[RMDB]
RNA sequence: GGGAACGACUCGAGUAGAGUCGAAAACAGCUGUACGAUCACCAGCAGUGGACGGACGCACGGUUGGCCAUCGAGGACUUCUUCUGGCAGGCCGGGGACAUGGCCGAUCGGAUCGACGAUCUGCAGGCUUCUUCUAGCCGUUCGCGGCUAGAAGAAGAAAAGAAACAACAACAACAAC
Reactivity to 2A3 in 0.01 (KOAc 150mM, MgCl2 10mM, bicine 150mM(pH8.5), 24C), signal-to-noise 2, nucleotides 027 to 126: c030a000g030c030u040g000u170a080c150g080a070u090c030a030c070c020a020g010c030a020g100u030g060g030a040c100g080g010a020c030g020c040a060c000g030g000u000u020g000g030c000c000a020u030c030g030a080g030g040a030c010u060u010c010u150u100c190u300g050g000c030a000g060g010c020c020g150g260g020g020a000c020a040u060g000g000c010c000g000a020u010c010g050g000a120u140c070g050a080c040g040a080u020c000u050g030c020a040g070g010
Reactivity to DMS in 0.01 (KOAc 150mM, MgCl2 10mM, bicine 150mM(pH8.5), 24C), signal-to-noise 2, nucleotides 027 to 126: c020a060g000c000u010g000u000a080c110g010a100u000c090a150c090c040a120g040c090a180g000u000g000g000a070c070g050g030a060c030g110c300a160c040g030g010u000u000g000g010c000c010a070u000c090g000a040g000g000a110c050u000u020c010u000u040c250u020g030g030c110a050g020g000c000c000g010g010g000g010a070c300a030u000g010g010c000c020g000a030u000c000g030g000a090u000c050g000a200c100g000a090u000c000u000g010c090a090g020g020